RNA sequence: GGGAACGACUCGAGUAGAGUCGAAAAAACGUUUGCCAAGGCCCUUGAAGAUGCUGAGGCAUAUCUUCUUAAGAAAAUGCCGUCGUGACAAAUGUGCAUCAAGAUGCCCUUGACUGACUGGCGGAACGUGACGAUUAAACUUCGGUUUAAUCGUCACAAAAGAAACAACAACAACAAC
Reactivity to DMS in 0.01 (KOAc 150mM, MgCl2 10mM, bicine 150mM(pH8.5), 24C), signal-to-noise 2, nucleotides 027 to 126: a070a010c210g010u000u020u000g030c000c000a050a240g010g000c020c170c070u020u010g020a120a100g010a090u000g000c040u000g000a300g030g000c000a010u000a050u000c060u000u000c020u000u000a130a090g010a060a080a070a070u000g000c010c010g000u010c050g000u020g020a110c070a030a070a080u000g020u000g000c000a010u000c090a060a140g070a060u000g000c100c030c080u000u000g010a100c100u000g000a070c060u010g000g010c030g000g010a110a060c150
Reactivity to 2A3 in 0.01 (KOAc 150mM, MgCl2 10mM, bicine 150mM(pH8.5), 24C), signal-to-noise 2, nucleotides 027 to 126: a000a000c070g010u040u030u030g020c000c010a010a030g010g000c000c010c050u020u150g130a090a020g090a070u150g020c010u020g010a030g040g000c020a000u050a020u030c000u060u010c020u080u070a190a030g110a100a140a070a020u150g010c040c000g020u040c030g110u040g030a010c030a020a110a100u050g130u210g010c000a020u010c050a080a020g010a180u000g000c000c020c000u020u020g030a020c000u000g030a020c040u120g000g040c000g000g020a050a020c050

About this RNA
Source: RMDB library OK2TRN, as collected in RNAgym. The record gives the reactivity of an RNA of 177 nucleotides to DMS and 2A3. The DMS profile rests on 871 reads.